[RMDB]
RNA sequence: GGGAACGACUCGAGUAGAGUCGAAAACUCGGCCGUGUCGUGGAAACCGGUGAUAUAAAAUCUGUCUAUGAGUGGCCGCGACAUCCCUAUACGCGAGCGCUGCUUGCCUCUGUCCCGACGAUGGAUCCAUAUUAGCCUACUUCGGUAGGCUAAUAUGAAAAGAAACAACAACAACAAC
Reactivity to 2A3 in 0.01 (KOAc 150mM, MgCl2 10mM, bicine 150mM(pH8.5), 24C), signal-to-noise 9, nucleotides 027 to 126: c020u020c010g030g000c010c020g040u050g040u050c020g010u040g030g040a070a040a050c030c020g030g040u060g050a040u080a020u070a140a150a040a050u070c040u060g090u030c050u060a090u110g030a030g090u070g030g020c000c000g000c010g010a010c010a080u040c020c010c000u060a080u030a070c060g020c030g020a050g030c060g020c080u090g010c020u030u060g020c010c000u030c020u030g050u050c000c010c010g040a060c030g030a040u120g040g010a020u040c030
Reactivity to DMS in 0.01 (KOAc 150mM, MgCl2 10mM, bicine 150mM(pH8.5), 24C), signal-to-noise 6, nucleotides 027 to 126: c040u000c020g010g010c030c020g030u010g000u000c010g000u010g020g000a040a100a090c060c030g000g010u020g000a050u020a110u050a090a070a110a100u030c140u010g020u010c020u010a070u020g000a110g020u010g000g010c000c010g010c080g000a060c090a060u000c010c010c010u020a090u030a090c120g000c040g020a090g000c050g000c040u010g010c020u010u010g010c040c010u010c020u000g010u000c020c010c000g030a080c110g020a100u010g000g000a130u020c050